[RMDB]
RNA sequence: GGGAACGACUCGAGUAGAGUCGAAAAAGUGGACGAUACAUUACACCGAGCAAUUAAAUUACUGUCCACGCUCGGCCAUUAUUCUGGCGAGAGCCAGUUCACAGACAGCUAGCGAAAGGAAGGACCUAGCAGGAAGGAAGGAGCUAGCGCUAGGGCAGCAUAUGGGUAAUUUCGAUUACCCAUAUGCAAAAGAAACAACAACAACAAC
Reactivity to DMS in 0.01 (KOAc 150mM, MgCl2 10mM, bicine 150mM(pH8.5), 24C), signal-to-noise 1, nucleotides 027 to 156: a140g030u010g000g020a120c050g030a170u020a030c110a240u000u020a220c080a060c000c070g000a100g070c030a150a160u000u010a040a080a180u000u000a070c070u020g000u000c000c030a040c070g000c050u000c020g030g130c010c090a080u000u010a140u000u000c030u010g000g050c000g030a280g000a280g110c010c000a060g000u000u000c060a060c060a110g020a120c040a110g020c060u000a140g020c070g000a130a090a030g010g000a050a150g000g020a110c050c040u020a170g010c000a110g010g010a110a090g020g060a080a070g000g020a070g020c050u000a050g020c080g020c030u020a010g000g010g000c060a140
Reactivity to 2A3 in 0.01 (KOAc 150mM, MgCl2 10mM, bicine 150mM(pH8.5), 24C), signal-to-noise 4, nucleotides 027 to 156: a010g010u010g010g000a020c040g060a120u120a150c110a130u160u110a080c110a010c000c000g000a010g000c020a070a130u120u190a230a140a090u140u100a100c050u080g000u010c020c000a010c030g000c000u000c000g010g020c000c000a060u180u170a090u210u020c000u000g000g020c010g020a050g000a000g040c000c000a000g010u080u100c090a050c000a050g140a040c030a020g010c010u010a010g000c030g130a090a050a020g030g050a060a040g030g030a020c000c000u010a010g050c030a010g070g060a010a050g040g000a010a040g020g010a050g020c000u020a010g010c010g000c040u030a020g000g000g060c010a010